Structure probing data (2A3 and DMS) for a 177-nucleotide construct.
It was measured as part of the RMDB library M2PK90.
The DMS profile rests on 2,310 reads.
In probing experiments dimethyl sulfate is read out at A N1 and C N3, which are open when not base-paired.
The reactions ran in a buffer of 150 mM KOAc, 10 mM MgCl2 and 150 mM bicine (pH 8.5), at 24 C.
RNA sequence: GGGAACGACUCGAGUAGAGUCGAAAAAUUGAUUUGAGACGUCGCCUUGCAGUGUUAACAUGGCUCUCAUGAACCUCUUUGAUCUUCCACAAAGGGUAGGCUACGGGUGAAACCUCUUAGGCUAAAAUUAUCAUGAUACCUUCGGGUAUCAUGAUAAAAAAGAAACAACAACAACAAC
Reactivity to 2A3 in 0.01 (KOAc 150mM, MgCl2 10mM, bicine 150mM(pH8.5), 24C), signal-to-noise 1, nucleotides 027 to 126: a000u060u090g020a050u100u030u140g060a050g000a000c040g060u040c020g010c020c030u070u050g050c050a060g010u020g000u200u080a080a000c030a050u020g040g020c030u000c000u020c080a010u030g030a040a040c020c000u000c000u060u060u030g030a040u010c070u050u000c040c000a020c020a030a070a010g070g000g010u030a060g030g000c010u020a000c060g010g060g070u050g060a100a040a020c020c020u030c030u120u050a030g070g000c020u050a020a140a000a000
Reactivity to DMS in 0.01 (KOAc 150mM, MgCl2 10mM, bicine 150mM(pH8.5), 24C), signal-to-noise 3, nucleotides 027 to 126: a070u010u000g010a140u000u000u010g010a080g010a050c160g010u000c080g030c030c030u010u000g010c080a050g020u000g000u000u010a090a080c060a050u000g020g000c090u000c080u000c040a060u020g000a080a120c120c020u000c040u000u000u020g000a090u000c070u000u000c040c070a140c040a020a020a060g020g000g000u000a060g000g000c020u000a040c130g000g010g030u000g000a070a060a060c070c010u000c050u000u010a060g000g010c060u000a030a030a050a140